[RMDB]
RNA sequence: GGGAACGACUCGAGUAGAGUCGAAAACCCGACCGCGCUGCCGGUCUCGGGCUGCGGUUCGGGGUCGUCGGUGUCCACGGCCAAGGUCACAUACCAGCGGCCAUCCGGCUCGCGGGACACGAUCACCGAUAGAGUCGUAAUUCGUUACGACUCUAUCAAAAGAAACAACAACAACAAC
Reactivity to 2A3 in 0.01 (KOAc 150mM, MgCl2 10mM, bicine 150mM(pH8.5), 24C), signal-to-noise 9, nucleotides 027 to 126: c000c000c000g010a010c010c000g030c000g120c300u070g000c010c000g040g040u030c080u050c050g150g010g000c010u030g010c020g010g000u020u080c050g020g020g000g000u010c020g010u000c040g050g130u140g060u110c060c020a020c030g000g000c010c010a080a060g060g020u100c060a040c010a160u190a080c040c030a040g010c010g000g000c000c000a010u010c010c000g000g000c030u030c020g010c040g000g000g010a010c030a010c050g080a140u150c040a030c070c050
Reactivity to DMS in 0.01 (KOAc 150mM, MgCl2 10mM, bicine 150mM(pH8.5), 24C), signal-to-noise 6, nucleotides 027 to 126: c000c000c000g010a090c020c030g010c000g000c190u000g020c000c010g010g000u010c160u020c190g000g010g020c010u010g030c010g000g000u020u010c070g000g010g000g020u010c100g020u000c060g010g030u000g010u010c010c060a110c050g000g000c000c000a140a140g030g010u020c120a090c100a140u050a070c130c080a090g040c060g000g010c000c000a050u010c100c040g000g000c000u010c020g000c050g000g000g010a040c050a060c060g000a030u010c140a110c110c110